This 177-nucleotide RNA was probed chemically with DMS and 2A3.
RNA sequence: GGGAACGACUCGAGUAGAGUCGAAAAAUUGUGACGAACCUUGCAGAGUGAGUUCUAUUCAGCAAUGGAUAGUAUUUACGAAGUCAUGUAAAUCGUAAUAUCUAGAGGAAGGUGAAGUCGUAACAAGCCCAUACCAACUGUUCGCAGUUGGUAUGGGAAAAGAAACAACAACAACAAC
Reactivity to DMS in 0.01 (KOAc 150mM, MgCl2 10mM, bicine 150mM(pH8.5), 24C), signal-to-noise 1, nucleotides 027 to 126: a160u010u030g010u010g000a000c020g000a240a060c020c020u010u000g000c060a090g000a260g020u000g020a070g000u000u000c020u000a000u000u000c000a010g010c300a110a130u000g000g020a040u000a000g000u000a020u000u000u020a000c000g010a060a120g000u010c300a180u020g020u000a030a090a060u020c030g000u000a010a100u010a030u000c010u000a130g020a080g000g000a020a030g000g020u000g000a050a140g000u000c000g020u000a060a050c050a060a060g000
Reactivity to 2A3 in 0.01 (KOAc 150mM, MgCl2 10mM, bicine 150mM(pH8.5), 24C), signal-to-noise 2, nucleotides 027 to 126: a000u100u060g030u040g030a000c020g000a030a000c030c000u050u090g070c040a020g040a090g210u050g010a020g020u140u000c020u010a030u010u020c020a020g000c010a010a130u010g000g010a000u000a000g030u040a100u000u050u000a010c020g010a060a020g070u060c030a040u150g110u280a040a080a130u040c010g000u000a030a000u020a050u080c020u030a040g060a080g280g070a070a000g000g000u010g050a110a010g000u000c020g010u020a020a030c020a050a020g030
Overview:
The reactions ran in a buffer of 150 mM KOAc, 10 mM MgCl2 and 150 mM bicine (pH 8.5), at 24 C. The 2A3 profile rests on 1,798 reads. For DMS the reverse transcriptase was MarathonRT.